Chemical mapping of a 177-nucleotide RNA with DMS. For DMS, 1,923 sequencing reads were counted. The RNA was probed in 150 mM KOAc, 10 mM MgCl2 and 150 mM bicine (pH 8.5) at 24 C.
RNA sequence: GGGAACGACUCGAGUAGAGUCGAAAAGAUAUGGAGUGCGCUCGAAGACAUGACGCUACAUCACAGUAUGUCGGAAACGACAUAUCACAGUGUAGCCGUCAACAGCUUCGAGCGCACUCCUAAGUCACACCUGUAAUAGCUUCGGCUAUUACAGGUGAAAAGAAACAACAACAACAAC
Reactivity to DMS in 0.01 (KOAc 150mM, MgCl2 10mM, bicine 150mM(pH8.5), 24C), signal-to-noise 3, nucleotides 027 to 126: g000a050u010a300u000g010g000a010g030u000g010c020g040c000u000c000g000a010a000g000a040c130a270u000g000a010c000g000c000u000a000c000a000u000c090a210c300a290g000u010a000u000g000u000c000g010g020a160a100a200c010g010a010c000a010u000a000u000c100a140c300a180g010u000g000u000a010g020c180c120g020u000c000a040a080c290a220g030c000u000u000c010g000a040g010c000g020c010a000c000u000c000c000u010a010a050g000u020c020a240